[RMDB]
RNA sequence: GGGAACGACUCGAGUAGAGUCGAAAACGCGGCGCUGCUGCAGUUAAAACGCCCGUAGUUGGCCCCCCGCCGCCACGAGGAAACGGGAGCGCUCCAGGCAGGCCCGUUGGACCCGCCGCGUGGGACCGAUUAAAACUGAGUUCGCUCAGUUUUAAUCAAAAGAAACAACAACAACAAC
Reactivity to 2A3 in 0.01 (KOAc 150mM, MgCl2 10mM, bicine 150mM(pH8.5), 24C), signal-to-noise 3, nucleotides 027 to 126: c020g020c040g000g020c080g010c090u100g020c020u040g000c030a080g040u080u150a110a190a070a060c100g060c010c000c020g020u080a060g070u070u100g060g000c020c040c000c000c020c030g030c030c010g020c010c010a040c030g040a070g040g050a090a080a030c020g010g020g010a050g050c070g000c020u030c020c020a030g100g000c020a020g030g040c010c000c000g020u020u020g000g010a020c000c020c000g000c010c010g010c010g010u040g000g020g010a040c010c040
Reactivity to DMS in 0.01 (KOAc 150mM, MgCl2 10mM, bicine 150mM(pH8.5), 24C), signal-to-noise 3, nucleotides 027 to 126: c010g010c100g010g000c030g000c080u000g000c060u010g000c080a100g000u020u030a090a100a300a260c300g000c060c030c050g040u020a100g020u010u020g030g020c030c060c080c030c010c050g000c050c080g010c030c010a030c000g020a160g000g000a040a090a050c000g000g030g010a120g010c160g000c060u000c110c110a130g010g020c020a110g000g000c040c000c020g000u040u020g010g010a110c050c040c030g030c020c000g000c030g000u020g000g010g020a150c130c080
The record gives the reactivity of an RNA of 177 nucleotides to 2A3 and DMS.
For DMS the reverse transcriptase was MarathonRT.
The 2A3 profile rests on 2,934 reads.
Conditions: 150 mM KOAc, 10 mM MgCl2 and 150 mM bicine (pH 8.5), 24 C.
Reactivities are given for positions 27 through 126.